[RMDB]
RNA sequence: GGGAACGACUCGAGUAGAGUCGAAAAUGAAAGACUAGGAAACUCGAAUAAAUAAGUGGUAAUCCUAGCGAAUCCACGGCGAGGAAACUAGGACACUAACCAUGUGUUCCCGGACGCUAGAAAAAAACACUAUGCUGUUGUUCGCAACAGCAUAGUGAAAAGAAACAACAACAACAAC
Reactivity to 2A3 in 0.01 (KOAc 150mM, MgCl2 10mM, bicine 150mM(pH8.5), 24C), signal-to-noise 2, nucleotides 027 to 126: u140g020a070a020a010g040a050c020u110a040g110g180a150a140a000c010u000c000g010a030a020u100a290a150a010u160a260a050g010u010g000g000u020a030a060u030c010c010u000a010g020c000g020a020a010u030c000c000a080c200g130g000c190g040a020g000g010a000a040a040c010u010a010g010g020a010c020a010c130u090a100a070c020c010a010u060g050u010g000u030u030c010c000c000g020g050a060c040g050c090u160a070g060a140a050a050a000a000a000a000
Reactivity to DMS in 0.01 (KOAc 150mM, MgCl2 10mM, bicine 150mM(pH8.5), 24C), signal-to-noise 2, nucleotides 027 to 126: u010g050a140a060a210g000a030c010u000a120g020g020a160a150a050c000u000c010g000a010a060u000a160a070a120u000a110a120g050u000g000g000u000a110a200u000c000c000u000a000g000c010g000a300a110u010c000c020a090c100g020g030c130g010a160g000g000a070a090a100c000u000a010g010g000a060c120a050c170u030a080a060c030c050a040u020g020u000g010u000u000c000c000c020g000g050a040c130g020c130u000a010g010a030a000a030a040a060a040a150